RNA sequence: GGGAACGACUCGAGUAGAGUCGAAAACAGACUCGGUGGUCUCGAAAACGCAGUCGAACACUCAGCCCACAACGACCUGCCACUCCGCACAGUGGGCUUUACAACUUACUACGGACCAUCACUGUGCUCUACUAUAGCGCUUCGGCGCUAUAGUAGAAAAAGAAACAACAACAACAAC
Reactivity to 2A3 in 0.01 (KOAc 150mM, MgCl2 10mM, bicine 150mM(pH8.5), 24C), signal-to-noise 2, nucleotides 027 to 126: c030a000g030a090c060u030c130g020g010u040g050g010u010c080u040c090g080a080a080a000a030c090g040c050a020g070u050c050g030a070a030c100a040c110u060c070a000g000c010c060c000a000c020a090a070c090g080a050c010c020u020g040c040c010a090c070u080c050c050g030c000a010c000a030g000u020g000g010g000c010u010u000u010a020c030a040a040c020u030u100a030c020u020a030c030g020g000a020c000c000a010u040c010a030c040u010g000u050g070c010
Reactivity to DMS in 0.01 (KOAc 150mM, MgCl2 10mM, bicine 150mM(pH8.5), 24C), signal-to-noise 3, nucleotides 027 to 126: c050a050g000a110c090u000c090g020g050u020g010g000u020c000u000c050g000a030a070a100a130c190g020c200a030g010u010c060g040a060a110c120a140c100u000c150a070g010c030c000c010a060c050a140a100c120g010a100c100c060u000g000c040c040a090c160u000c040c120g020c070a030c100a110g020u000g020g000g000c050u010u010u000a060c110a050a050c120u020u010a080c120u010a130c160g000g000a060c020c020a040u010c020a050c020u000g000u000g010c090

This 177-nucleotide RNA was probed chemically with 2A3 and DMS. Values cover nucleotides 27 to 126. For 2A3, 1,637 sequencing reads were counted. 2A3 is a SHAPE reagent: it acylates the 2'-hydroxyl of flexible nucleotides of all four kinds. It was measured as part of the RMDB library OK2TST.